[RMDB]
RNA sequence: GGGAACGACUCGAGUAGAGUCGAAAAAGAAUAACGUGCUCAAAUCGGAUAUAGGCGUCAAGUUCGAUACGCGUUAUUUAGACUUGAUGAAGGAUCCCGUGACUCAAUUAGUGACACCUGGAAAAUACCUUCCCAUUCAAUUCGUUGAAUGGGAAGGAAAAGAAACAACAACAACAAC
Reactivity to DMS in 0.01 (KOAc 150mM, MgCl2 10mM, bicine 150mM(pH8.5), 24C), signal-to-noise 3, nucleotides 027 to 126: a090g010a040a000u000a010a030c020g010u000g010c300u000c180a070a130a050u010c020g010g010a040u000a170u020a120g010g000c040g020u000c010a110a140g000u000u000c040g020a050u000a130c050g030c040g010u000u010a010u000u000u000a140g010a050c080u010u000g000a100u000g010a080a060g000g000a080u000c000c000c050g000u000g010a110c130u020c090a110a070u000u020a090g010u010g010a030c050a050c020c040u000g020g010a090a020a060a130u000a150
Reactivity to 2A3 in 0.01 (KOAc 150mM, MgCl2 10mM, bicine 150mM(pH8.5), 24C), signal-to-noise 2, nucleotides 027 to 126: a000g040a000a000u020a000a020c000g000u010g000c030u030c140a140a140a030u020c030g000g000a010u090a030u060a200g140g040c020g090u070c070a120a070g000u010u050c000g000a000u030a030c020g010c000g030u020u000a010u010u010u010a030g010a040c020u030u060g050a070u080g070a180a030g050g000a060u000c000c010c030g030u040g030a050c010u010c120a110a170u090u070a140g030u030g030a010c000a020c020c030u090g090g090a070a110a040a030u120a050